An RNA of 177 nucleotides, treated with 2A3 and read out base by base. The 2A3 profile rests on 599 reads. 2A3 adducts were read by reverse transcription with SuperScript II with manganese.
RNA sequence: GGGAACGACUCGAGUAGAGUCGAAAACAACAAAACAAAACGGGCCACGGAAAGAAAACCGAAAGGUACGCAAAGAUCAUGCAAGUACGAAAGCGUCGCCGGGACCGAAUCGUACUAAACAAACAAAACCACUCACCCUGUUCGCAGGGUGAGUGGUAAAAGAAACAACAACAACAAC
Reactivity to 2A3 in 0.01 (KOAc 150mM, MgCl2 10mM, bicine 150mM(pH8.5), 24C), signal-to-noise 1, nucleotides 027 to 126: c040a090a020c000a140a070a030a000c030a000a070a120a000c070g000g000g000c000c000a040c010g040g040a080a110a200g120a000a260a070a050c000c000g190a000a030a010g000g160u010a010c010g000c040a200a000a000g100a070u230c100a000u130g110c040a000a000g000u030a000c000g000a030a000a000g030c000g060u000c120g000c070c030g000g100g000a000c000c000g000a060a100u010c000g000u010a120c020u000a000a070a080c090a090a040a000c130a000a210a000